[RMDB]
RNA sequence: GGGAACGACUCGAGUAGAGUCGAAAAGGCGCGAAGGCUGCCAUCAUUGGUAGCAGCGACGAUGGCUUUGAACUCUUAGCCCAAAAAGAGCAUGCUACUAAAUAUGGAUGCGCGCUCUUUGUCGUCGUGACACACUUCUUUUCGAAGAAGUGUGUCAAAAAGAAACAACAACAACAAC
Reactivity to 2A3 in 0.01 (KOAc 150mM, MgCl2 10mM, bicine 150mM(pH8.5), 24C), signal-to-noise 3, nucleotides 027 to 126: g000g000c010g020c010g050a010a000g100g000c070u110g000c050c000a020u050c030a030u020u090g020g000u000a010g000c010a000g020c000g030a020c020g090a120u120g000g000c010u060u020u080g060a270a210c040u000c010u300u020a000g010c000c030c040a000a210a020a000a000g050a020g000c060a130u030g020c000u010a020c000u050a060a100a220u300a110u150g160g000a030u050g020c040g000c010g000c090u040c000u060u010u010g130u130c010g010u000c030g050
Reactivity to DMS in 0.01 (KOAc 150mM, MgCl2 10mM, bicine 150mM(pH8.5), 24C), signal-to-noise 3, nucleotides 027 to 126: g010g010c020g010c020g030a030a070g010g010c020u000g030c000c000a030u000c060a140u010u000g000g010u000a010g020c010a070g010c010g010a110c150g010a150u000g000g000c010u000u010u000g000a160a160c290u020c050u010u000a040g000c020c020c180a040a050a030a070a040g000a250g000c030a090u000g010c000u010a050c020u000a000a040a120u000a170u020g010g000a080u010g000c110g030c010g000c010u000c020u000u000u000g000u000c010g020u010c020g020
Structure probing data (2A3 and DMS) for a 177-nucleotide construct.
The reactions ran in a buffer of 150 mM KOAc, 10 mM MgCl2 and 150 mM bicine (pH 8.5), at 24 C.
Values cover nucleotides 27 to 126.